RNA sequence: GGGAACGACUCGAGUAGAGUCGAAAAGCCAUGCCAUGGGAUGCCCUUCCCGAUUCCGUCCAUACCCGCUCCCAGAGGGUCGCCCAGCGAAUGGCGGGACCCCACUCAACUGGGGUCCGCGUUCCAUAUAAUCACCAUGGUUCGCCAUGGUGAUUAUAAAAGAAACAACAACAACAAC
Reactivity to DMS in 0.01 (KOAc 150mM, MgCl2 10mM, bicine 150mM(pH8.5), 24C), signal-to-noise 1, nucleotides 027 to 126: g000c040c010a010u000g000c090c060a140u010g020g010g010a070u000g020c000c040c030u000u000c030c040c010g010a140u000u010c070c000g020u000c020c040a050u000a070c030c000c040g020c060u000c010c010c020a160g010a120g010g000g040u000c090g000c000c000c000a090g010c160g010a070a020u000g000g040c000g020g050g010a030c010c010c000c000a010c060u000c290a060a100c240u000g000g000g010g020u010c010c010g000c040g000u000u010c000c050a110u000
Chemical mapping of a 177-nucleotide RNA with DMS. For DMS the reverse transcriptase was MarathonRT. Reactivities are given for positions 27 through 126. The reactions ran in a buffer of 150 mM KOAc, 10 mM MgCl2 and 150 mM bicine (pH 8.5), at 24 C. Reactivities are rounded to 0.1 and cut off at 0 and 3.